[RMDB]
RNA sequence: GGGAACGACUCGAGUAGAGUCGAAAAGAGGAUUCAACGAGCUUCGUAGCAACGAUAGCAACGUAGCUUUUGCUACGACCCAAGCUAUCGAGGGUAGCUACGUCCCGUGCUCGAGGGCAGAAUCCGAGGUAUACGUGACGUUCGCGUCACGUAUACCAAAAGAAACAACAACAACAAC
Reactivity to 2A3 in 0.01 (KOAc 150mM, MgCl2 10mM, bicine 150mM(pH8.5), 24C), signal-to-noise 3, nucleotides 027 to 126: g170a000g030g020a000u000u010c060a070a030c040g010a010g030c010u080u050c020g000u000a010g000c000a030a090c010g020a030u000a020g010c020a050a080c010g020u020a010g000c050u130u260u190u300g000c000u000a000c000g080a100c040c020c020a040a020g000c000u020a010u020c000g000a070g040g150g140u150a050g000c000u030a000c000g020u040c030c040c010g040u080g000c000u000c000g030a090g060g090g060c070a040g010a010a000u000c000c020g010a070
Reactivity to DMS in 0.01 (KOAc 150mM, MgCl2 10mM, bicine 150mM(pH8.5), 24C), signal-to-noise 2, nucleotides 027 to 126: g000a190g010g020a030u000u000c010a200a120c010g000a040g020c060u010u010c060g020u000a010g000c000a110a210c040g010a000u000a000g020c030a100a200c000g020u000a020g000c000u010u020u030u020g000c000u000a000c000g010a140c130c080c150a130a130g000c010u010a010u000c010g000a090g010g020g000u000a130g000c000u000a000c010g000u010c080c050c080g000u000g010c010u000c020g020a060g000g010g030c160a160g000a050a000u010c000c000g000a090
The record gives the reactivity of an RNA of 177 nucleotides to 2A3 and DMS. The 2A3 profile rests on 2,855 reads. Values are in units of 0.01, from 0 to 300, in steps of 10.